Annotation:
Source: RMDB library M2PK90, as collected in RNAgym. The record gives the reactivity of an RNA of 177 nucleotides to DMS. DMS adducts were read by reverse transcription with MarathonRT. Values cover nucleotides 27 to 126. The RNA was probed in 150 mM KOAc, 10 mM MgCl2 and 150 mM bicine (pH 8.5) at 24 C.
[RMDB]
RNA sequence: GGGAACGACUCGAGUAGAGUCGAAAAGAAUGGCGAAAGCGAGGAGCUCCGGGUGGAUAUUUUUUCCCUGAAGGUUCCGCAGGAAGCAUCCUUCGCGGGACCUGCACCGUGUUGGAUGCAAAAAGAAACUUACCUAGCGAUUCGUCGCUAGGUAAGUAAAAGAAACAACAACAACAAC
Reactivity to DMS in 0.01 (KOAc 150mM, MgCl2 10mM, bicine 150mM(pH8.5), 24C), signal-to-noise 1, nucleotides 027 to 126: g000a080a040u020g010g030c090g010a110a090a170g010c030g000a120g020g000a120g000c080u000c080c040g020g000g020u000g000g030a010u000a000u000u000u010u000u000u000c020c010c030u000g000a070a020g020g000u000u000c000c010g000c020a090g000g000a120a150g030c030a040u000c000c010u000u010c000g010c010g000g000g000a020c040c010u000g020c040a090c030c030g020u000g030u010u000g010g000a010u000g000c020a030a010a040a110a050g000a070a100